About this RNA:
Structure probing data (DMS and 2A3) for a 177-nucleotide construct.

RNA sequence: GGGAACGACUCGAGUAGAGUCGAAAAUCCCGCCUCACCCCGCUCCAUCACACCAGCUGGCCCUCUUUGCUUCCUUUUCCCAGAAUCGUUAAGCCCCGACUCCCACUAGCACCUCGUACCAACCUCGGCAGUAGUCGUAAUUCGUUACGACUACUGCAAAAGAAACAACAACAACAAC
Reactivity to DMS in 0.01 (KOAc 150mM, MgCl2 10mM, bicine 150mM(pH8.5), 24C), signal-to-noise 3, nucleotides 027 to 126: u010c000c000c000g010c080c070u000c080a140c080c010c060c020g020c060u010c060c050a100u010c090a060c040a060c080c040a050g010c050u000g010g020c010c000c030u010c030u010u010u030g000c020u020u040c000c020u020u010u000u010c000c000c060a170g000a090a040u010c060g000u000u000a130a160g000c030c010c000c000g010a080c050u010c040c020c000a030c090u010a070g020c040a060c000c020u000c010g020u000a090c010c050a060a070c070c020u020c150g000
Reactivity to 2A3 in 0.01 (KOAc 150mM, MgCl2 10mM, bicine 150mM(pH8.5), 24C), signal-to-noise 4, nucleotides 027 to 126: u000c000c000c000g010c000c000u050c020a070c000c020c010c010g030c010u030c010c010a050u050c030a010c000a010c060c020a020g040c020u050g030g040c020c000c010u030c010u040u040u050g020c010u040u030c020c010u040u050u030u050c010c010c000a020g060a040a050u070c050g040u050u100a050a030g020c030c000c000c000g020a020c020u030c020c000c000a030c030u010a020g010c010a020c000c000u030c020g030u040a050c030c010a030a050c010c030u030c020g040
For 2A3, 5,085 sequencing reads were counted. The RNA was probed in 150 mM KOAc, 10 mM MgCl2 and 150 mM bicine (pH 8.5) at 24 C.